[RMDB]
RNA sequence: GGGAACGACUCGAGUAGAGUCGAAAACGGACGGCGCGGUUUGGGAAGCGGCGCGGUGUUCUUGGGGUUUUGCCGAAGCUCCAUCCGGCAACCAAGGCGUUUCAAGCAUUGCGCAUUGCGGUGAACACGGCAUAUACGAUUUCGAUCGUAUAUGCCGAAAAGAAACAACAACAACAAC
Reactivity to 2A3 in 0.01 (KOAc 150mM, MgCl2 10mM, bicine 150mM(pH8.5), 24C), signal-to-noise 5, nucleotides 027 to 126: c030g020g050a020c010g010g060c010g010c020g020g050u050u060u040g120g000g010a050a000g040c020g020g000c000g000c010g010g010u050g010u060u090c040u010u030g030g000g000g040u040u040u090u140g040c020c010g020a040a010g030c040u030c060c010a030u050c030c000g000g000c000a010a050c010c010a020a020g050g010c050g020u020u080u090c030a040a000g030c030a030u020u110g020c030g000c030a030u020u230g020c040g020g020u060g020a040a020c080a020
Reactivity to DMS in 0.01 (KOAc 150mM, MgCl2 10mM, bicine 150mM(pH8.5), 24C), signal-to-noise 2, nucleotides 027 to 126: c100g010g020a060c040g010g020c040g010c070g000g000u000u040u020g010g000g000a120a090g040c070g000g010c060g010c070g010g010u010g000u000u020c020u020u000g020g000g000g000u010u070u010u000g000c020c020g000a080a060g000c090u010c090c070a050u020c100c000g000g010c010a040a120c040c010a040a060g000g010c140g000u020u010u050c010a120a100g010c010a010u000u010g000c000g000c060a080u040u000g010c090g010g020u020g040a110a100c130a130

About this RNA:
The data come from the RNA Mapping Database (RMDB), library OK1LIB. An RNA of 177 nucleotides, treated with 2A3 and DMS and read out base by base. As a SHAPE reagent, 2A3 marks flexible, mostly unpaired nucleotides at the ribose 2'-OH. For 2A3 the reverse transcriptase was SuperScript II with manganese. The DMS profile rests on 3,615 reads. For 2A3, 6,827 sequencing reads were counted. Values cover nucleotides 27 to 126. The reactions ran in a buffer of 150 mM KOAc, 10 mM MgCl2 and 150 mM bicine (pH 8.5), at 24 C.